[RMDB]
RNA sequence: GGGAACGACUCGAGUAGAGUCGAAAAGUGACGCAAUUCAAGUAGCCAAGUGCUAUGGGGAGUCUGUGUUAGUUAAUGCUGCUAACACACAUCUUAAGCAUGGCGGUGGUAUCGCUGGUGCUAUUAACAUCCUUGUGAUCUUCGGAUCACAAGGAUGAAAAGAAACAACAACAACAAC
Reactivity to 2A3 in 0.01 (KOAc 150mM, MgCl2 10mM, bicine 150mM(pH8.5), 24C), signal-to-noise 3, nucleotides 027 to 126: g060u030g030a010c030g030c080a000a010u090u040c050a170a050g020u000a010g010c000c020a190a040g080u060g080c010u000a040u060g010g030g010g010a030g020u000c040u040g020u010g000u030u000a020g000u030u110a130a040u270g110c120u030g000c000u020a000a000c000a000c010a010c020a060u050c010u040u080a030a000g000c000a010u020g010g000c070g020g000u070g010g110u120a060u120c030g040c010u040g030g070u040g020c010u010a100u090u110a070a020
Reactivity to DMS in 0.01 (KOAc 150mM, MgCl2 10mM, bicine 150mM(pH8.5), 24C), signal-to-noise 2, nucleotides 027 to 126: g000u000g010a070c070g020c100a070a040u010u000c100a110a120g010u000a070g020c030c040a100a100g010u010g010c000u000a040u010g010g000g000g000a090g020u010c160u000g020u010g000u000u000a010g010u000u010a050a160u010g030c240u020g020c000u000a010a000c000a000c000a000c140a050u000c010u000u010a080a070g000c000a030u000g020g000c040g010g000u000g030g000u010a090u000c050g030c030u000g020g030u000g000c020u000a050u000u000a060a180